Annotation
Chemical mapping of a 177-nucleotide RNA with DMS. For DMS the reverse transcriptase was MarathonRT. The reactions ran in a buffer of 150 mM KOAc, 10 mM MgCl2 and 150 mM bicine (pH 8.5), at 24 C. Reactivities are given for positions 27 through 126. It was measured as part of the RMDB library VIROID.
RNA sequence: GGGAACGACUCGAGUAGAGUCGAAAAUGGGAUGCCCUUCCCGAUUCCGUCCAUCCCCCCCCCAGGAGGGUCGCCCAGGAAUGUCGGGAACUCCACUCUUCGGAGUCCGCGCUUCAUUCUUUCUUACGAACACUCCAGUGUUCGCACUGGAGUGUUCAAAAGAAACAACAACAACAAC
Reactivity to DMS in 0.01 (KOAc 150mM, MgCl2 10mM, bicine 150mM(pH8.5), 24C), signal-to-noise 2, nucleotides 027 to 126: u010g000g010g010a070u000g000c030c020c050u000u000c010c020c020g010a180u010u000c030c030g010u010c040c040a170u030c000c000c000c000c000c000c000c000c000a050g000g010a150g000g010g030u000c000g000c010c010c030a100g000g000a020a010u010g000u000c000g000g010g030a020a020c010u000c010c000a170c170u000c240u000u000c110g020g000a030g010u000c000c000g010c040g000c190u000u010c020a020u000u000c030u000u000u000c020u000u000a110c300